[RMDB]
RNA sequence: GGGAACGACUCGAGUAGAGUCGAAAAGACUGGCUGUGGAGCCGUGAGCACCUCAUCCUUAGGCUAGUACAUAUUUCGAUAUGUAUUAUGCUCCUUUUUUGGCGGAUGACAAGCCAGCACAAUUAGAGGGUUCCGAUUAGUUCGCUGGUCGGAACCCAAAAGAAACAACAACAACAAC
Reactivity to 2A3 in 0.01 (KOAc 150mM, MgCl2 10mM, bicine 150mM(pH8.5), 24C), signal-to-noise 9, nucleotides 027 to 126: g080a070c000u000g000g010c010u030g020u100g100g030a060g040c060c070g210u160g020a060g000c010a040c010c000u010c000a020u020c010c000u050u130a050g040g000c010u000a000g000u000a000c000a000u020a010u030u090u080c180g120a010u000a000u000g000u000a000u010u010a050u290g010c020u170c020c020u120u210u110u040u110u200g120g040c060g010g000a010u010g000a010c050a040a000g000c000c010a010g030c030a010c050a080a160u230u180a050g040a080
Reactivity to DMS in 0.01 (KOAc 150mM, MgCl2 10mM, bicine 150mM(pH8.5), 24C), signal-to-noise 9, nucleotides 027 to 126: g010a150c010u000g000g000c000u010g010u020g020g000a060g030c000c030g010u030g010a120g020c010a050c020c030u000c010a010u000c000c000u010u010a130g000g000c010u000a040g010u000a010c010a010u000a000u000u000u050c120g010a010u000a000u000g010u000a000u000u020a010u070g000c010u010c030c010u000u020u030u010u030u030g000g030c300g000g000a010u000g010a030c200a020a030g000c000c000a000g010c050a070c190a050a080u010u040a080g010a300
The record gives the reactivity of an RNA of 177 nucleotides to 2A3 and DMS. Reactivities are given for positions 27 through 126. Source: RMDB library OK1LIB, as collected in RNAgym.